[RMDB]
An RNA of 177 nucleotides, treated with 2A3 and DMS and read out base by base. For 2A3, 4,447 sequencing reads were counted.
RNA sequence: GGGAACGACUCGAGUAGAGUCGAAAACAUUUGCACAAUGCCGUACGUUACGUACUUCCUUAUGCUAAGCCGUGCAUAACGGAGGACUUAUGGCUGGCUGGCAUCUUGAUACCAAAAUGGCGCAGGAACUAAAUUCUGUCUUCGGACAGAAUUUAGUAAAAGAAACAACAACAACAAC
Reactivity to 2A3 in 0.01 (KOAc 150mM, MgCl2 10mM, bicine 150mM(pH8.5), 24C), signal-to-noise 3, nucleotides 027 to 126: c020a030u000u040u150g030c040a040c020a170a110u110g000c000c020g050u080a050c010g030u100u090a050c110g040u080a170c000u020u040c000c000u030u030a020u050g010c010u030a060a100g090c090c030g110u080g020c010a010u010a030a020c130g010g000a030g030g000a020c030u030u050a040u090g050g000c030u040g050g000c030u010g040g000c000a030u010c010u030u110g040a070u080a190c020c020a010a020a080a220u130g030g000c060g010c060a040g070g070a030
Reactivity to DMS in 0.01 (KOAc 150mM, MgCl2 10mM, bicine 150mM(pH8.5), 24C), signal-to-noise 4, nucleotides 027 to 126: c090a080u010u000u000g010c030a090c100a050a130u010g020c030c020g030u000a020c140g010u000u000a100c210g000u010a130c020u000u000c010c020u000u000a010u000g020c010u000a070a130g020c110c110g000u000g000c040a020u000a010a030c180g020g010a020g010g010a080c050u010u000a040u000g000g000c030u010g010g020c070u000g010g010c000a020u010c050u000u010g010a090u010a120c050c030a040a060a070a090u010g000g000c050g020c130a100g000g020a110